Structure probing data (DMS and 2A3) for a 177-nucleotide construct. The reactions ran in a buffer of 150 mM KOAc, 10 mM MgCl2 and 150 mM bicine (pH 8.5), at 24 C. DMS adducts were read by reverse transcription with MarathonRT.
[RMDB]
RNA sequence: GGGAACGACUCGAGUAGAGUCGAAAAUGGCCCAUGGUUUUCCAGAGGCCAGACAGUUCAAGGCGGACAUGCGCCUCUUCCAGGGACAGGACAGGGCUGCAAAAGAUAUUUCUCAGCCUUGAAGCAGCUAUUGUCUGCGAUUCGUCGCAGACAAUAGAAAAGAAACAACAACAACAAC
Reactivity to DMS in 0.01 (KOAc 150mM, MgCl2 10mM, bicine 150mM(pH8.5), 24C), signal-to-noise 4, nucleotides 027 to 126: u000g010g000c000c000c070a200u000g000g010u000u010u010u000c010c010a050g000a300g000g000c020c010a020g010a120c250a110g000u000u000c020a040a030g000g020c000g010g020a070c210a120u000g020c040g010c040c000u000c060u000u000c040c010a090g000g010g000a100c160a060g010g000a060c170a030g010g000g010c010u010g020c120a030a050a070a080g020a130u000a080u010u010u000c050u000c020a180g010c000c000u000u000g010a050a060g030c180a100g000
Reactivity to 2A3 in 0.01 (KOAc 150mM, MgCl2 10mM, bicine 150mM(pH8.5), 24C), signal-to-noise 2, nucleotides 027 to 126: u030g000g000c040c010c000a010u050g000g030u090u210u300u090c020c010a010g000a060g010g000c020c000a000g020a030c040a030g000u020u040c020a020a020g020g000c030g020g040a060c030a090u080g010c030g010c020c020u030c010u030u000c010c020a050g070g000g140a050c030a170g000g020a020c040a050g020g010g010c060u200g000c090a020a050a050a040g090a050u150a130u170u180u000c080u000c030a000g010c000c000u030u000g000a010a010g000c040a010g000